The record gives the reactivity of an RNA of 207 nucleotides to DMS and 2A3. 2A3 is a SHAPE reagent: it acylates the 2'-hydroxyl of flexible nucleotides of all four kinds. For DMS the reverse transcriptase was MarathonRT. It was measured as part of the RMDB library M2RFPK.

RNA sequence: GGGAACGACUCGAGUAGAGUCGAAAACAGAGCUAAUGAGCCACAUACCUACCCAAGGUGAAAGCUCCUUCUCUCGCAAUGUGUAACUCAUGAUUCUCAUGACCCCUGGUUGUAGAGAUCCGGACUAUAGACUAGAGGGUGUUCGCACCCUCUAGAAGUCUUAAUAUCUCUUCGGAGAUAUUAAGACAAAAGAAACAACAACAACAAC
Reactivity to DMS in 0.01 (KOAc 150mM, MgCl2 10mM, bicine 150mM(pH8.5), 24C), signal-to-noise 3, nucleotides 027 to 156: c060a110g000a090g020c080u000a090a100u010g010a050g040c030c020a060c060a120u000a050c010c010u000a070c060c040c010a140a090g020g030u000g000a100a130a150g010c060u000c010c030u000u000c030u010c010u000c050g020c050a080a040u000g030u000g030u000a050a080c040u000c020a050u000g010a130u000u000c060u000c010a080u020g000a180c030c010c010c020u000g020g020u000u000g010u000a070g010a130g000a070u010c050c040g000g000a100c060u010a090u010a140g000a200c040u000a010g000a030g010g020g030u000g000u000u010c300g020c010a020c000c000c000u000c000u000a000g000a030a120
Reactivity to 2A3 in 0.01 (KOAc 150mM, MgCl2 10mM, bicine 150mM(pH8.5), 24C), signal-to-noise 3, nucleotides 027 to 156: c030a000g020a010g040c030u090a120a040u100g030a030g030c050c010a040c030a060u190a040c010c010u060a100c010c010c020a060a020g010g000u070g050a080a040a020g030c030u040c010c030u090u010c050u020c020u030c030g040c060a040a100u080g050u020g020u120a070a060c010u000c020a020u040g040a140u230u050c030u020c070a070u080g030a070c000c000c000c040u060g030g000u060u040g040u070a040g010a010g000a090u010c060c040g000g000a020c060u080a070u110a270g100a050c010u000a010g000a000g000g000g000u000g000u020u000c030g040c030a000c000c000c000u010c000u000a000g000a000a000